Structure probing data (2A3 and DMS) for a 177-nucleotide construct.
Values cover nucleotides 27 to 126.
It was measured as part of the RMDB library TTRDES.
RNA sequence: GGGAACGACUCGAGUAGAGUCGAAAAGAUAUGGACGAUCACUGAGCUUGGACCGGUACAUCGGAAACGAUGUGACCGCUAGCUCGUGAUCGUCCUAAGUCUAAACGAUUACCUUCGGGUAAUCGAAGUGUUAUGAUCAGUUCGCUGAUCAUAACACAAAAGAAACAACAACAACAAC
Reactivity to 2A3 in 0.01 (KOAc 150mM, MgCl2 10mM, bicine 150mM(pH8.5), 24C), signal-to-noise 5, nucleotides 027 to 126: g000a010u050a020u120g010g010a000c010g010a000u020c010a030c120u300g020a010g010c050u160u270g060g070a160c140c110g000g000u010a010c000a000u020c000g020g020a090a040a050c010g000a000u000g040u070g190a070c000c000g010c020u000a000g000c000u000c000g000u000g000a000u000c000g000u000c000c000u000a000a000g000u000c010u020a060a030a060c030g000a000u000u010a000c000c000u060u130c300g140g000g000u000a010a000u000c000g010a190a020
Reactivity to DMS in 0.01 (KOAc 150mM, MgCl2 10mM, bicine 150mM(pH8.5), 24C), signal-to-noise 5, nucleotides 027 to 126: g000a020u010a300u020g010g000a030c010g010a000u000c000a010c000u010g030a000g020c010u000u000g030g000a110c300c000g000g010u000a020c000a020u000c000g030g000a100a050a250c020g000a000u000g010u000g020a030c000c010g020c030u000a010g000c000u000c010g020u000g000a000u000c000g010u000c010c000u000a000a100g000u000c000u000a100a110a280c010g000a020u000u000a000c000c000u000u020c250g010g010g010u000a010a000u000c000g010a040a060